[RMDB]
Overview
The record gives the reactivity of an RNA of 207 nucleotides to DMS and 2A3. DMS adducts were read by reverse transcription with MarathonRT. The RNA was probed in 150 mM KOAc, 10 mM MgCl2 and 150 mM bicine (pH 8.5) at 24 C. The data come from the RNA Mapping Database (RMDB), library OK3TST.
RNA sequence: GGGAACGACUCGAGUAGAGUCGAAAAGGUAAAGAACAGCUGCUAAAUUGAUGGCAUUGAGGCUAGUGCUUGUUCAUGGCUGGGUGUGUGGUACCUGGAGCUGUCCUGAGCAGGGGUCCUGAUUCCAACUGAUUAUGUGGCCAGUGUGUCAUGCAAAGGUCCUAUUUAGUUUCGACUAAAUAGGACCAAAAGAAACAACAACAACAAC
Reactivity to DMS in 0.01 (KOAc 150mM, MgCl2 10mM, bicine 150mM(pH8.5), 24C), signal-to-noise 2, nucleotides 027 to 156: g020g010u000a030a000a130g010a070a050c040a080g030c000u010g020c020u010a070a070a140u000u010g020a110u000g020g000c070a120u000u000g000a130g020g020c030u000a090g030u000g000c040u000u000g050u000u020c030a070u000g030g040c040u000g000g020g030u000g020u010g020u000g000g020u000a000c030c000u000g010g000a080g000c050u000g010u000c020c050u000g010a130g030c040a110g000g010g020g030u000c010c010u000g000a150u010u000c040c030a070a100c050u010g010a080u010u010a070u000g020u000g020g000c020c020a110g030u010g010u010g020u000c000a100u030g020c040a070a150a200
Reactivity to 2A3 in 0.01 (KOAc 150mM, MgCl2 10mM, bicine 150mM(pH8.5), 24C), signal-to-noise 3, nucleotides 027 to 156: g070g000u070a050a090a000g040a050a020c020a010g010c010u080g030c040u070a090a080a120u130u140g050a100u090g040g000c040a010u030u070g060a030g040g020c010u050a030g050u020g050c020u060u100g040u040u070c070a060u070g040g030c010u040g040g020g020u030g010u000g010u000g010g030u020a050c000c030u030g000g040a010g000c030u040g040u060c000c040u030g010a010g000c030a040g000g020g000g010u010c020c000u050g030a050u120u000c020c010a060a050c090u020g030a090u090u080a050u200g040u020g020g010c000c070a110g070u070g010u050g000u150c010a030u060g090c070a080a060a060